[RMDB]
RNA sequence: GGGAACGACUCGAGUAGAGUCGAAAAGAAAACAAGUACCGAGAACAUUGUUUUCGCUGCUUGGCGUUGCCGUUUUGUGUUGCAGUUGGUUGGGUAACGCCGCAAAUACCAACCGUAGAGACAGAUAAUCCCAUAUAUAGUUCGCUAUAUAUGGGAUAAAAGAAACAACAACAACAAC
Reactivity to 2A3 in 0.01 (KOAc 150mM, MgCl2 10mM, bicine 150mM(pH8.5), 24C), signal-to-noise 4, nucleotides 027 to 126: g030a010a020a000a010c010a000a010g040u060a070c080c060g050a040g010a050a040c070a300u170u280g000u000u020u000u000c000g010c010u000g000c020u040u050g000g000c000g010u010u020g050c000c000g040u020u020u130u080g220u040g060u110u090g000c040a020g000u090u080g040g020u040u160g060g000g000u010a040a010c020g000c000c000g000c020a040a070a020u210a040c010c010a000a000c000c010g040u080a050g030a000g010a080c040a030g070a020u180a070
Reactivity to DMS in 0.01 (KOAc 150mM, MgCl2 10mM, bicine 150mM(pH8.5), 24C), signal-to-noise 8, nucleotides 027 to 126: g010a070a040a140a120c020a000a010g010u010a030c270c030g000a060g000a030a020c020a160u020u040g010u000u000u010u000c010g020c180u000g010c010u000u000g000g000c030g000u000u000g000c020c010g030u020u020u010u020g010u010g000u010u010g010c070a070g000u000u010g000g010u000u010g000g000g000u010a060a100c200g000c020c020g000c110a030a060a080u030a060c010c010a010a020c010c030g010u020a070g010a140g000a080c080a060g010a120u020a090
Record summary:
An RNA of 177 nucleotides, treated with 2A3 and DMS and read out base by base. Values cover nucleotides 27 to 126. As a SHAPE reagent, 2A3 marks flexible, mostly unpaired nucleotides at the ribose 2'-OH. The reactions ran in a buffer of 150 mM KOAc, 10 mM MgCl2 and 150 mM bicine (pH 8.5), at 24 C. For 2A3 the reverse transcriptase was SuperScript II with manganese. For 2A3, 2,834 sequencing reads were counted. DMS adducts were read by reverse transcription with MarathonRT.